[RMDB]
RNA sequence: GGGAACGACUCGAGUAGAGUCGAAAAGGGCGGGCCUCCCGAUCCGAGGGGCCCGACUACCAAUUUUGGAAAGCACUCCGGGCGAAGGGUUGAUUACCACUCAGGGAGGAACACACGGAGUUAGAACGAAUAUAUGUCGGUUCGCCGACAUAUAUUCAAAAGAAACAACAACAACAAC
Reactivity to 2A3 in 0.01 (KOAc 150mM, MgCl2 10mM, bicine 150mM(pH8.5), 24C), signal-to-noise 1, nucleotides 027 to 126: g000g050g000c030g020g010g000c010c000u010c040c010c020g000a170u060c040c020g020a020g000g010g000g010c000c040c000g030a020c010u010a020c000c000a050a060u160u140u110u210g120g040a170a000a000g080c030a010c050u000c010c030g040g020g050c070g060a100a080g020g010g010u010u060g040a130u000u250a060c000c020a070c040u060c040a000g040g070g060a060g010g080a050a010c060a010c010a020c020g040g000a010g000u010u070a110g030a090a020c050
Reactivity to DMS in 0.01 (KOAc 150mM, MgCl2 10mM, bicine 150mM(pH8.5), 24C), signal-to-noise 2, nucleotides 027 to 126: g010g000g010c010g000g000g020c000c000u000c020c010c000g010a130u010c130c050g000a060g020g000g020g000c000c030c020g020a020c010u000a280c010c020a130a090u000u020u010u000g000g020a100a140a100g010c130a050c020u010c010c030g010g000g040c060g000a090a060g010g040g000u030u000g020a210u020u000a100c030c040a110c110u010c080a140g000g000g000a150g000g000a070a050c030a100c100a020c060g020g000a040g020u000u000a090g000a120a140c190

An RNA of 177 nucleotides, treated with 2A3 and DMS and read out base by base.
It was measured as part of the RMDB library VIROID.
The DMS profile rests on 1,028 reads.
The reactions ran in a buffer of 150 mM KOAc, 10 mM MgCl2 and 150 mM bicine (pH 8.5), at 24 C.
For 2A3 the reverse transcriptase was SuperScript II with manganese.